Conditions: 150 mM KOAc, 10 mM MgCl2 and 150 mM bicine (pH 8.5), 24 C.
Structure probing data (2A3 and DMS) for a 207-nucleotide construct.
DMS adducts were read by reverse transcription with MarathonRT.
For 2A3, 9,331 sequencing reads were counted.
The data come from the RNA Mapping Database (RMDB), library RNAMAK.
The DMS profile rests on 3,074 reads.
RNA sequence: GGGAACGACUCGAGUAGAGUCGAAAACGCUGGGAAACAUCCAUCGAGUCGGAGUAUUGGAGCUAACUGAAGCGCGCACGGUUAGCUAUGAAGAUACCACGACUAAGACAGUGGAUGUUUCCUGUGCUGAAGCGCGCACGGCAACCGAAAGGUGCGAUCAUUUUCUAGAGUUCGCUCUAGAAAAUGAAAAAGAAACAACAACAACAAC
Reactivity to 2A3 in 0.01 (KOAc 150mM, MgCl2 10mM, bicine 150mM(pH8.5), 24C), signal-to-noise 4, nucleotides 027 to 156: c030g000c020u040g000g000g000a000a000a000c000a000u000c010c000a030u080c090g050a030g010u010c010g000g030a120g030u000a000u000u030g020g030a000g000c000u000a000a000c000u020g050a190a060g020c000g010c000g000c010a010c000g010g000u000u010a000g000c010u060a300u060g010a010a000g000a000u000a000c020c050a100c080g020a000c000u010a040a020g110a030c070a040g020u010g010g010a000u000g000u000u000u000c000c000u010g000u000g000c010u020g020a110a050g000c010g000c000g000c000a000c010g010g000c010a020a010c010c000g050a080a050a000g010g010u030g010c010g010a040
Reactivity to DMS in 0.01 (KOAc 150mM, MgCl2 10mM, bicine 150mM(pH8.5), 24C), signal-to-noise 2, nucleotides 027 to 156: c030g040c020u000g000g020g000a040a000a030c010a030u000c010c000a070u000c000g000a040g020u010c000g000g000a160g020u000a020u000u010g030g000a030g030c000u010a010a010c000u000g000a030a050g000c020g040c000g060c000a300c030g020g040u000u000a000g000c000u000a080u000g010a160a260g010a050u000a020c000c030a210c020g010a020c020u000a150a110g000a030c300a110g010u000g010g000a050u010g000u020u000u020c000c000u000g010u010g000c050u000g000a120a040g010c000g010c010g040c000a280c030g000g000c020a090a130c000c060g010a080a160a100g010g010u000g000c080g000a110